[RMDB]
RNA sequence: GGGAACGACUCGAGUAGAGUCGAAAAACGCACAGAACAGCCAACGUACAUUUAGACUGCCUAUAACUCAAAGCCCGCGACCCAGUCUUCGCGGCCGUAAUUGUGCGUCGUGUUGGCUAACUAUUGGCUUGCUUUGUAACUUCGGUUACAAAGCAAGAAAAGAAACAACAACAACAAC
Reactivity to DMS in 0.01 (KOAc 150mM, MgCl2 10mM, bicine 150mM(pH8.5), 24C), signal-to-noise 2, nucleotides 027 to 126: a070c110g010c090a060c100a040g020a090a140c190a060g010c020c000a010a010c010g000u000a130c240a100u020u000u000a080g000a020c020u000g000c040c050u010a080u000a100a100c130u000c110a070a080a090g030c200c020c020g040c000g000a060c130c080c140a150g030u000c110u000u000c050g000c040g010g000c010c170g000u000a030a020u000u000g010u000g030c000g010u000c020g000u010g030u010u000g010g010c000u000a000a040c080u000a100u000u000g010g000
Reactivity to 2A3 in 0.01 (KOAc 150mM, MgCl2 10mM, bicine 150mM(pH8.5), 24C), signal-to-noise 2, nucleotides 027 to 126: a000c050g020c030a070c000a060g080a070a050c030a020g040c000c000a020a000c020g050u080a040c050a120u110u080u050a050g010a030c000u090g010c030c030u140a160u120a170a080c030u070c240a160a110a100g060c060c050c040g020c000g000a010c080c060c040a030g020u010c030u060u000c000g000c000g030g040c030c020g040u060a080a010u100u080g030u090g050c010g030u020c020g000u030g000u030u020g030g020c000u010a020a060c040u050a060u150u050g120g010

Structure probing data (DMS and 2A3) for a 177-nucleotide construct.
For 2A3, 1,212 sequencing reads were counted.
The DMS profile rests on 1,342 reads.
DMS adducts were read by reverse transcription with MarathonRT.
It was measured as part of the RMDB library OK2TRN.